RNA sequence: GGGAACGACUCGAGUAGAGUCGAAAAUAACAUUAAAUCCUAAAAAGAGUUAUGCCUCUGAAUCAGAAGUAGAGUUUAUAUCAGAGAGGAUAAUAAAUGGAGCUGUCAUACCACUGUAUUGUAGACACCAGGCAGUAUUAUUCGUAAUACUGCCUGGAAAAGAAACAACAACAACAAC
Reactivity to DMS in 0.01 (KOAc 150mM, MgCl2 10mM, bicine 150mM(pH8.5), 24C), signal-to-noise 2, nucleotides 027 to 126: u000a110a170c140a150u020u030a000a120a150u020c010c010u030a060a100a080a080a130g000a120g000u000u000a010u000g000c050c010u000c020u000g020a030a060u000c300a060g000a110a060g010u000a110g010a130g000u010u000u010a080u000a120u010c030a020g000a070g010a070g000g010a000u000a030a030u010a020a030a030u020g010g010a070g000c070u000g020u000c050a060u000a090c020c060a080c100u000g020u020a060u010u020g000u010a110g000a070c140a140
Reactivity to 2A3 in 0.01 (KOAc 150mM, MgCl2 10mM, bicine 150mM(pH8.5), 24C), signal-to-noise 1, nucleotides 027 to 126: u000a040a000c030a010u000u220a080a150a050u000c000c000u110a170a210a020a070a060g110a020g020u020u010a020u130g130c000c000u040c020u000g020a020a030u080c090a090g030a200a000g070u140a060g050a010g090u050u160u130a070u020a010u040c000a000g020a000g020a030g030g040a000u010a050a000u040a050a060a070u090g000g000a090g070c030u010g010u060c000a020u090a150c000c080a040c140u100g030u130a130u120u100g060u030a040g020a020c000a000

Chemical mapping of a 177-nucleotide RNA with DMS and 2A3. The reactions ran in a buffer of 150 mM KOAc, 10 mM MgCl2 and 150 mM bicine (pH 8.5), at 24 C. For 2A3, 701 sequencing reads were counted.